[RMDB]
RNA sequence: GGGAACGACUCGAGUAGAGUCGAAAAGAUAUGGAUGUAAUGAUGACCGUCUGAUACGUUGAAAACGCUGGAGCUCGGAAACGAGCUCCAGCGUUGGAGUAUCGCGACGCAAGUUACAUCCUAAGUCCUUAACUAGUGGGUUCGCCCACUAGUUAAGAAAAGAAACAACAACAACAAC
Reactivity to DMS in 0.01 (KOAc 150mM, MgCl2 10mM, bicine 150mM(pH8.5), 24C), signal-to-noise 2, nucleotides 027 to 126: g020a150u000a300u000g000g000a000u000g000u000a010a010u000g000a300u000g010a190c300c000g020u000c050u030g000a000u000a000c020g010u000u000g000a210a050a040a000c010g050c010u000g000g000a020g050c010u000c000g000g010a130a140a160c000g000a000g010c000u010c000c000a000g010c000g000u010u010g000g000a120g010u000a000u000c010g010c200g010a010c000g000c040a040a280g020u010u000a000c000a000u000c000c000u020a040a120g010u000c040
Description:
Source: RMDB library TTRINS, as collected in RNAgym. Chemical mapping of a 177-nucleotide RNA with DMS. Reactivities are rounded to 0.1 and cut off at 0 and 3. The reactions ran in a buffer of 150 mM KOAc, 10 mM MgCl2 and 150 mM bicine (pH 8.5), at 24 C.